[RMDB]
RNA sequence: GGGAACGACUCGAGUAGAGUCGAAAAUGCCGACGCGCGGUGCAAGCGCAUCGAGCUGACCGCGAAGGGCCGCGCGGCACUGCAAAAGGCGGUGCCCCUAUGGCGCGGGGUGCAGGCGGAGGUGACCUGUGCGCUAUUAUUUCGAUAAUAGCGCACAAAAAGAAACAACAACAACAAC
Reactivity to 2A3 in 0.01 (KOAc 150mM, MgCl2 10mM, bicine 150mM(pH8.5), 24C), signal-to-noise 2, nucleotides 027 to 126: u130g030c000c000g030a030c020g020c000g000c010g050g060u100g110c180a210a080g060c080g000c100a070u120c030g010a040g000c040u050g040a050c000c030g030c040g070a110a120g060g010g000c000c000g000c000g000c000g000g030c030a000c000u030g010c050a090a210a290a030g270g000c020g000g000u020g000c000c010c000c040u170a220u270g090g000c040g000c040g000g030g000g050u110g000c030a050g030g000c020g020g030a070g020g050u050g040a040c090c010
Reactivity to DMS in 0.01 (KOAc 150mM, MgCl2 10mM, bicine 150mM(pH8.5), 24C), signal-to-noise 3, nucleotides 027 to 126: u000g000c030c000g010a150c070g020c000g010c000g020g020u000g010c120a080a150g040c100g010c070a040u020c050g030a160g000c030u010g000a120c080c010g000c000g010a110a120g020g010g000c040c010g020c030g010c100g000g010c000a010c000u000g020c020a120a070a110a160g010g020c000g010g010u000g000c000c010c160c050u020a070u000g010g000c020g010c020g010g000g000g010u010g000c050a090g000g030c050g010g000a170g010g010u000g010a130c040c060

Structure probing data (2A3 and DMS) for a 177-nucleotide construct. For 2A3, 1,896 sequencing reads were counted. For DMS, 2,604 sequencing reads were counted.